[RMDB]
RNA sequence: GGGAACGACUCGAGUAGAGUCGAAAAGAUAUGGACGUAGAGGACAUGCUGUCAGUUCGGAAACGAACUGCAGCAACAGCCUUCAUACGUCCUAAGUCAAACGCCCUAAGCUUCGGCUUAGGGCGAACAUUCCUAGCAGGUUCGCCUGCUAGGAAUGAAAAGAAACAACAACAACAAC
Reactivity to DMS in 0.01 (KOAc 150mM, MgCl2 10mM, bicine 150mM(pH8.5), 24C), signal-to-noise 3, nucleotides 027 to 126: g000a040u000a260u020g000g010a010c000g020u010a030g000a030g000g000a030c050a200u000g040c000u000g000u020c010a000g030u000u000c000g020g010a060a040a100c000g020a020a000c000u000g000c010a000g010c000a020a010c300a200g010c020c000u000u000c030a140u000a020c000g000u000c000c000u000a000a070g000u000c000a160a130a250c030g000c000c000c000u000a000a030g010c000u000u020c290g030g010c000u000u000a010g000g000g010c000g000a010a050
Reactivity to 2A3 in 0.01 (KOAc 150mM, MgCl2 10mM, bicine 150mM(pH8.5), 24C), signal-to-noise 2, nucleotides 027 to 126: g010a000u050a010u120g010g000a010c020g000u020a030g000a000g050g000a050c110a290u300g020c010u050g220u300c050a000g010u000u000c000g000g020a050a040a020c000g000a010a000c010u010g000c020a000g060c000a020a020c040a020g020c000c000u090u010c090a160u050a160c000g010u000c000c000u000a000a000g000u000c030a110a070a180c020g010c000c000c000u000a020a000g000c010u020u300c300g110g000c010u000u000a010g000g030g000c000g010a000a000
This 177-nucleotide RNA was probed chemically with DMS and 2A3. The reactions ran in a buffer of 150 mM KOAc, 10 mM MgCl2 and 150 mM bicine (pH 8.5), at 24 C. 2A3 adducts were read by reverse transcription with SuperScript II with manganese. The DMS profile rests on 3,369 reads. It was measured as part of the RMDB library TTRDES. Reactivities are given for positions 27 through 126.